The record gives the reactivity of an RNA of 207 nucleotides to 2A3. The reactions ran in a buffer of 150 mM KOAc, 10 mM MgCl2 and 150 mM bicine (pH 8.5), at 24 C. It was measured as part of the RMDB library M2RFPK.
RNA sequence: GGGAACGACUCGAGUAGAGUCGAAAAAACUCAGCUAGGGAGAGUAUAACAUUCAUGUUGACGAGACCUAGACGAAACACAGAGGAAAAUUAUUAAUCACUGGAUAGUAUUAGUGAUGACUCUGUGUAAAACUCUUCUACGUUCGCGUAGAAGAGAAGUGUAUAGGCACGUUCGCGUGCCUAUACACAAAAGAAACAACAACAACAAC
Reactivity to 2A3 in 0.01 (KOAc 150mM, MgCl2 10mM, bicine 150mM(pH8.5), 24C), signal-to-noise 1, nucleotides 027 to 156: a010a000c010u010c010a020g000c020u000a020g030g000g000a060g010a080g080u200a210u050a300a070c060a060u050u300c060a050u220g010u040u060g030a050c040g040a030g080a030c000c000u000a000g000a030c010g010a010a020a000c000a000c000a000g000a000g010g080a000a190a150a000u070u060a040u030u090a100a000u000c010a000c010u040g120g000a110u140a300g080u060a100u110u010a000g010u000g040a000u010g000a020c000u000c010u000g000u000g030u010a000a000a000a010c000u000c030u000u000c000u010a000c000g000u040u000c160g030c010g090u000a000g000a000a000g000a000g000a020a010